[RMDB]
RNA sequence: GGGAACGACUCGAGUAGAGUCGAAAAGUUGUUCACAGAUGAAGCAGCUGUCCUUCAUCGCACGAGGGCUAACUCGUGCUGUGAACAAGUCACGUGAGUCGAUCAGUUAGCCCUCUGAUCGGUCAGAGGACAGCUGAGCUCUGACACUCACGUGUCGGCACUCAAAAUUAUUCGUAAUUUUGAGUGCAAAAGAAACAACAACAACAAC
Reactivity to DMS in 0.01 (KOAc 150mM, MgCl2 10mM, bicine 150mM(pH8.5), 24C), signal-to-noise 2, nucleotides 027 to 156: g040u000u000g020u010u010c010a100c030a180g000a120u010g020a050a040g020c010a120g010c020u000g020u010c040c030u000u010c050a080u010c130g020c060a090c130g010a020g030g010g030c210u000a040a120c000u000c040g040u020g010c000u000g000u000g000a030a050c040a090a120g010u000c020a020c000g030u000g000a030g040u000c060g040a120u000c040a030g010u020u000a130g000c000c000c020u000c020u010g000a060u030c120g020g000u020c050a050g020a030g000g020a020c000a060g030c030u010g010a040g050c050u000c060u000g000a180c060a070c010u000c020a040c040g020u000g010u000c000g000
Reactivity to 2A3 in 0.01 (KOAc 150mM, MgCl2 10mM, bicine 150mM(pH8.5), 24C), signal-to-noise 4, nucleotides 027 to 156: g030u010u020g000u000u010c040a040c030a030g030a060u080g040a110a010g040c010a010g020c020u050g020u050c000c000u010u130c020a090u060c060g010c020a010c050g000a010g010g040g020c050u060a050a010c000u010c020g030u060g070c020u020g000u000g010a030a020c040a030a040g130u070c010a000c030g020u050g040a040g060u090c050g090a120u070c030a010g000u010u030a010g010c000c010c030u000c010u020g060a090u160c090g000g100u050c050a030g010a010g040g010a020c010a010g020c010u000g000a000g000c010u000c010u050g010a020c000a000c030u040c010a050c060g000u010g000u000c020g030
Background
Structure probing data (DMS and 2A3) for a 207-nucleotide construct. The RNA was probed in 150 mM KOAc, 10 mM MgCl2 and 150 mM bicine (pH 8.5) at 24 C. For DMS, 4,823 sequencing reads were counted. The data come from the RNA Mapping Database (RMDB), library OK3TST.